An RNA of 177 nucleotides, treated with DMS and 2A3 and read out base by base. The 2A3 profile rests on 2,686 reads. DMS adducts were read by reverse transcription with MarathonRT. The RNA was probed in 150 mM KOAc, 10 mM MgCl2 and 150 mM bicine (pH 8.5) at 24 C. It was measured as part of the RMDB library OK2TST.
[RMDB]
RNA sequence: GGGAACGACUCGAGUAGAGUCGAAAAAUCUUGUCCGCGAUAGAGCGCCUGGCCCGUCGCCUUGCCGUUCUGGGCCAGAAGGCCCAUCAUCGCCAUGGUUGUCUGGCUCUUGCCGGAGCCGGAUUCAAUAAAUAAUGGGUUUCGACCCAUUAUUUAUAAAAGAAACAACAACAACAAC
Reactivity to DMS in 0.01 (KOAc 150mM, MgCl2 10mM, bicine 150mM(pH8.5), 24C), signal-to-noise 8, nucleotides 027 to 126: a050u000c030u000u000g010u010c130c120g010c030g020a040u000a070g010a070g010c060g010c050c010u000g000g000c010c030c080g010u000c060g000c020c150u010u000g020c140c010g010u010u000c030u010g030g010g000c000c010a040g000a050a080g010g000c000c020c020a100u010c130a030u000c030g020c030c080a080u000g000g010u000u000g010u000c010u000g000g010c000u000c010u000u010g020c300c180g000g000a010g010c010c000g010g000a030u000u000c080a080
Reactivity to 2A3 in 0.01 (KOAc 150mM, MgCl2 10mM, bicine 150mM(pH8.5), 24C), signal-to-noise 3, nucleotides 027 to 126: a010u050c020u080u160g050u110c110c040g000c000g030a020u040a090g040a000g000c020g030c010c000u010g000g020c030c040c010g080u020c010g010c000c110u100u170g030c040c000g040u120u040c080u170g000g010g000c010c010a040g080a110a020g080g000c030c000c000a090u090c020a010u020c000g060c050c010a080u110g130g000u100u180g050u040c010u010g000g040c000u020c030u020u160g170c100c070g010g000a010g000c010c000g000g010a000u090u100c040a090